Structure probing data (2A3 and DMS) for a 177-nucleotide construct.
[RMDB]
RNA sequence: GGGAACGACUCGAGUAGAGUCGAAAAGAUAUGGACAUUAUGAGUGGAGCUUGGACCUUAUUCGGAAACGAAUAAGCUAGCUCGCAUACUGUGUCCUAAGUCAAAUCCUGCUCUUCGGAGCAGGAAACACCUAGGGGGAGUUCGCUCCCCCUAGGUGAAAAGAAACAACAACAACAAC
Reactivity to 2A3 in 0.01 (KOAc 150mM, MgCl2 10mM, bicine 150mM(pH8.5), 24C), signal-to-noise 2, nucleotides 027 to 126: g020a020u050a040u170g000g000a010c040a000u080u110a070u300g070a080g120u250g140g250a000g000c010u120u210g120g060a170c010c000u010u020a010u040u010c020g030g020a020a090a090c000g010a010a020u010a020a000g070c070u040a000g000c010u050c050g000c040a140u300a120c040u030g010u000g000u040c010c000u000a240a010g080u030c040a000a020a200u040c000c000u010g000c000u000c020u020u120c300g210g010a000g000c010a010g000g000a040a000a000
Reactivity to DMS in 0.01 (KOAc 150mM, MgCl2 10mM, bicine 150mM(pH8.5), 24C), signal-to-noise 1, nucleotides 027 to 126: g000a040u000a300u010g040g000a040c000a020u000u020a020u000g000a260g030u010g030g020a020g040c000u010u030g050g030a070c300c010u000u000a000u020u000c000g020g040a100a040a260c000g040a020a000u010a010a000g050c050u000a020g020c000u000c000g000c000a090u000a120c300u000g010u000g020u000c010c000u000a010a170g010u000c040a110a100a110u000c000c030u000g000c000u000c000u000u040c280g000g000a110g000c010a000g000g000a000a060a100